[RMDB]
RNA sequence: GGGAACGACUCGAGUAGAGUCGAAAAUGACGAUACCAUGGCCAAAACGCCGAAGGCCGUGAUGGACCUGCUGGAGCCGGUCUGGAACAAGGCGCGCGCCAAAGCGGCGGAAGAGGAAGCGGAACUAAUUAAUCGUCCUGUUCGCAGGACGAUUAAUAAAAGAAACAACAACAACAAC
Reactivity to DMS in 0.01 (KOAc 150mM, MgCl2 10mM, bicine 150mM(pH8.5), 24C), signal-to-noise 2, nucleotides 027 to 126: u000g030a130c140g020a150u010a110c090c010a050u000g000g030c000c020a110a080a200a180c030g010c020c040g030a100a210g020g000c010c020g020u000g000a100u000g000g000a080c030c020u000g040c020u000g000g010a150g020c040c140g000g000u000c010u010g020g020a080a050c090a090a160g010g000c030g020c090g040c170g000c020c040a040a090a140g000c040g000g010c040g010g010a030a070g010a110g020g000a090a060g010c080g020g010a050a130c130u000a090